[RMDB]
RNA sequence: GGGAACGACUCGAGUAGAGUCGAAAACUUGCACAGAAUGGAAUCAUGUUAAACUUACAGUGCAAGAAAGUAAGUUAACCCAUUUAAUUGAUAGCUAUGCUUAGUGUAAUGUGUAACUAUAGAGAGUAUACAAACCCCAAUUCGUUGGGGUUUGUAUAAAAGAAACAACAACAACAAC
Reactivity to 2A3 in 0.01 (KOAc 150mM, MgCl2 10mM, bicine 150mM(pH8.5), 24C), signal-to-noise 2, nucleotides 027 to 126: c000u000u030g070c050a000c010a030g160a000a070u040g000g080a070a080u220c040a070u180g000u110u080a050a090a050c000u010u010a030c050a130g010u050g160c010a000a000g020a000a000a000g000u070a070a070g000u000u090a030a040c040c000c030a010u020u080u080a090a120u060u080g100a120u000a070g010c030u070a000u300g020c040u100u020a030g040u070g020u220a000a100u020g020u030g020u110a050a030c020u010a030u110a040g110a000g010a060g080u030
Reactivity to DMS in 0.01 (KOAc 150mM, MgCl2 10mM, bicine 150mM(pH8.5), 24C), signal-to-noise 3, nucleotides 027 to 126: c020u000u000g000c000a030c050a150g010a030a050u020g020g010a070a040u030c300a140u050g020u020u010a070a090a050c010u010u000a010c080a050g010u000g000c110a080a050g000a070a070a050g000u000a020a020g000u010u010a050a070c050c030c010a090u020u020u020a090a060u060u030g000a070u010a000g020c020u010a010u000g020c060u000u000a090g000u010g020u000a050a040u000g010u000g010u000a000a090c040u010a060u040a060g010a140g010a100g000u020